[RMDB]
RNA sequence: GGGAACGACUCGAGUAGAGUCGAAAAACAGAUUUCCAAUCGAUAUUUUGUUCAAUAAGUGUAUCACUAUAUAUCCAUAGUGUGUUAUUGCAACUAAUAACGCCAUUUUUGAGAUACUCAAGAGCAAUAUUGUAGUUUUCGCUACCCACUCCAAUAGCGGACGGCCUCUAUUCGUAGAGGCCGUCCGAAAAGAAACAACAACAACAAC
Reactivity to 2A3 in 0.01 (KOAc 150mM, MgCl2 10mM, bicine 150mM(pH8.5), 24C), signal-to-noise 1, nucleotides 027 to 156: a000c040a030g080a010u000u040u080c050c010a080a080u130c020g040a000u000a080u040u070u120u080g020u010u030c070a100a050u120a220a000g030u030g030u150a000u020c010a000c040u060a050u010a000u030a060u300c060c030a030u040a060g060u130g000u010g010u100u000a010u000u020g080c100a130a110c120u180a020a010u010a010a000c060g000c020c020a060u110u090u060u120u080g170a200g000a030u040a060c020u070c080a000a060g020a000g010c000a000a000u010a030u120u090g010u090a090g010u000u040u060u060c000g000c050u100a050c000c000c030a040c020u100c100c050a190a030u140a070g040